[RMDB]
RNA sequence: GGGAACGACUCGAGUAGAGUCGAAAACAGGUUGAAGGCCCCUUCAAGUCCAUACAAAUAGACCGUACUAGGCUUCAUAGCCUUGCUGGACGCGUAAGGAGACGUAAGUUCAUACUGGGUUUACCCAGUCGGAGGGUUACUUCGGUAACCCUCCGACAAAAGAAACAACAACAACAAC
Reactivity to DMS in 0.01 (KOAc 150mM, MgCl2 10mM, bicine 150mM(pH8.5), 24C), signal-to-noise 2, nucleotides 027 to 126: c110a110g060g030u000u000g050a090a090g010g030c010c000c050c000u000u020c070a050a220g000u000c000c030a150u050a180c300a040a130a240u000a100g000a090c160c070g000u000a140c060u000a000g030g020c000u000u000c240a100u010a050g000c030c000u000u000g000c300u000g000g000a000c030g000c300g000u000a000a080g040g000a020g000a080c050g060u020a010a240g010u000u000c040a010u000a090c020u000g000g040g010u000u070u000a030c010c000c000a100
Reactivity to 2A3 in 0.01 (KOAc 150mM, MgCl2 10mM, bicine 150mM(pH8.5), 24C), signal-to-noise 2, nucleotides 027 to 126: c030a000g090g020u060u040g020a030a040g130g000c010c000c000c000u100u100c040a010a000g030u000c010c030a020u060a170c080a010a150a030u140a020g080a050c060c000g040u030a030c130u040a060g000g040c000u090u170c100a200u300a090g000c000c000u000u020g000c030u020g000g010a000c010g040c060g120u060a030a040g060g020a120g030a040c090g030u140a120a130g050u050u050c050a030u030a210c000u050g010g010g000u010u010u090a190c010c000c030a000

The data come from the RNA Mapping Database (RMDB), library OK1LIB. Structure probing data (DMS and 2A3) for a 177-nucleotide construct. For 2A3, 885 sequencing reads were counted. Conditions: 150 mM KOAc, 10 mM MgCl2 and 150 mM bicine (pH 8.5), 24 C.